RNA sequence: GGGAACGACUCGAGUAGAGUCGAAAAGAAUUAAGAUCCAGGAAGCCGAAAGGCGCGAAGCGACCGCUUGUACGUGUCGACCUAGACGAAAAGUCUAGGGGAGAUUCUGCACAUCUCCGACACGGUAGGGAGCUUCGCCCUGGUUAAGGUGCAGUAAAUGAUCCAUUAUCUUCGGAUAAUGGAUCAUAAAAGAAACAACAACAACAAC
Reactivity to 2A3 in 0.01 (KOAc 150mM, MgCl2 10mM, bicine 150mM(pH8.5), 24C), signal-to-noise 3, nucleotides 027 to 156: g020a010a040u230u160a080a010g050a060u030c000c010a000g020g030a130a030g020c000c020g070a090a030a050g020g000c010g000c000g000a000a000g000c010g040a040c000c000g080c200u190u200g080u120a040c000g000u000g000u000c010g010a060c000c000u000a000g010a010c010g060a110a170a170a140g000u000c010u000a000g000g000g020g000a000g000a000u160u090c000u010g010c000a000c000a000u000c000u000c000c020g000a000c000a000c010g020g040u100a100g030g010g010a010g010c000u000u000c000g000c000c000c000u000g020g010u010u020a040a020g040g000u000g000c020a000g010u010a030a150
Reactivity to DMS in 0.01 (KOAc 150mM, MgCl2 10mM, bicine 150mM(pH8.5), 24C), signal-to-noise 2, nucleotides 027 to 156: g000a100a110u010u000a080a110g020a130u000c000c000a050g000g000a160a180g000c000c030g000a100a140a130g040g030c000g030c010g000a010a090g030c000g010a300c040c010g000c190u010u000g030u000a050c010g020u010g020u000c010g030a210c000c000u000a020g000a020c000g000a120a060a190a190g000u000c000u010a010g000g030g050g000a010g000a010u000u000c010u000g040c070a050c110a200u000c000u000c010c040g010a030c000a000c010g000g050u000a160g000g000g000a300g010c010u000u000c040g010c010c000c000u000g000g010u000u010a040a090g000g010u000g000c000a020g020u000a070a140
About this RNA: Chemical mapping of a 207-nucleotide RNA with 2A3 and DMS. The data come from the RNA Mapping Database (RMDB), library OK3TST.